[RMDB]
RNA sequence: GGGAACGACUCGAGUAGAGUCGAAAAUGAUCGAGAGAUCUAACGAUGUACGCGAGUCUCGUGCACCGACUCGAGCGAAAGCUCGGUCGAAAGACCGCGUACAUCGGUCGGCAAGUGUACAGUCGACCAUAGCAUCCAUCUUCGGAUGGAUGCUAUGAAAAGAAACAACAACAACAAC
Reactivity to DMS in 0.01 (KOAc 150mM, MgCl2 10mM, bicine 150mM(pH8.5), 24C), signal-to-noise 8, nucleotides 027 to 126: u010g010a000u000c000g010a280g000a230g010a000u000c000u000a090a180c030g000a010u000g000u000a010c010g020c000g000a140g010u000c010u000c160g020u000g000c160a150c220c080g000a010c000u020c020g010a010g010c000g010a110a090a180g010c000u000c000g010g000u000c000g000a040a080a050g000a010c000c000g010c010g000u000a010c010a000u000c000g000g010u000c010g010g000c020a060a100g010u010g010u010a090c140a160g010u000c010g000a030c050
Reactivity to 2A3 in 0.01 (KOAc 150mM, MgCl2 10mM, bicine 150mM(pH8.5), 24C), signal-to-noise 5, nucleotides 027 to 126: u110g000a000u010c010g010a000g000a000g000a110u010c010u020a090a030c020g010a000u000g010u010a000c000g020c000g030a080g070u000c020u030c080g180u180g080c080a070c070c000g010a000c010u070c280g000a010g000c010g030a110a000a000g000c000u000c000g000g000u000c000g020a040a030a000g000a000c000c000g000c010g000u000a000c000a000u000c000g000g000u000c000g000g000c020a110a120g110u090g040u260a080c050a050g010u010c000g010a010c020
An RNA of 177 nucleotides, treated with DMS and 2A3 and read out base by base. The 2A3 profile rests on 12,531 reads. It was measured as part of the RMDB library OK2TRN. For DMS the reverse transcriptase was MarathonRT.